Structure probing data (DMS and 2A3) for a 177-nucleotide construct. High DMS reactivity at an A or C suggests that its Watson-Crick edge is free. The data come from the RNA Mapping Database (RMDB), library OK2TRN.

RNA sequence: GGGAACGACUCGAGUAGAGUCGAAAAUAGAAAGAUACAACAUGGUGACAGGGAAGAUCAUGACCACGGAGCAGCCCAAAACACUCAAGCAGCUUAGCAAGGAUGCUGUAGACAAGCUGCCAGAAAACACGUUCUGUAAAUUCGUUUACAGAACGUGAAAAGAAACAACAACAACAAC
Reactivity to DMS in 0.01 (KOAc 150mM, MgCl2 10mM, bicine 150mM(pH8.5), 24C), signal-to-noise 5, nucleotides 027 to 126: u000a070g020a090a080a090g000a080u010a060c060a050a080c090a040u000g010g010u000g000a070c070a070g010g000g000a080a070g000a050u000c050a070u000g000a110c070c050a020c060g000g020a070g000c050a100g010c020c010c040a040a060a070a060c170a060c120u010c080a100a130g010c000a020g020c030u000u000a090g030c050a080a100g010g010a110u010g010c020u000g000u020a060g000a100c180a030a040g000c020u010g020c000c070a100g010a060a060a050a150
Reactivity to 2A3 in 0.01 (KOAc 150mM, MgCl2 10mM, bicine 150mM(pH8.5), 24C), signal-to-noise 3, nucleotides 027 to 126: u170a020g120a020a100a010g100a020u080a080c030a070a020c020a100u080g000g040u050g040a040c050a050g020g050g020a020a050g020a060u070c010a040u080g060a050c020c030a020c070g030g000a010g010c020a010g030c020c010c000a030a060a010a010c100a020c020u080c010a020a060g000c000a000g010c020u050u090a010g020c020a070a070g160g030a110u180g020c010u020g020u070a040g040a080c030a020a010g000c010u010g000c010c010a070g060a030a070a010a010
Record summary:
For DMS the reverse transcriptase was MarathonRT. 2A3 adducts were read by reverse transcription with SuperScript II with manganese. The reactions ran in a buffer of 150 mM KOAc, 10 mM MgCl2 and 150 mM bicine (pH 8.5), at 24 C. Values cover nucleotides 27 to 126.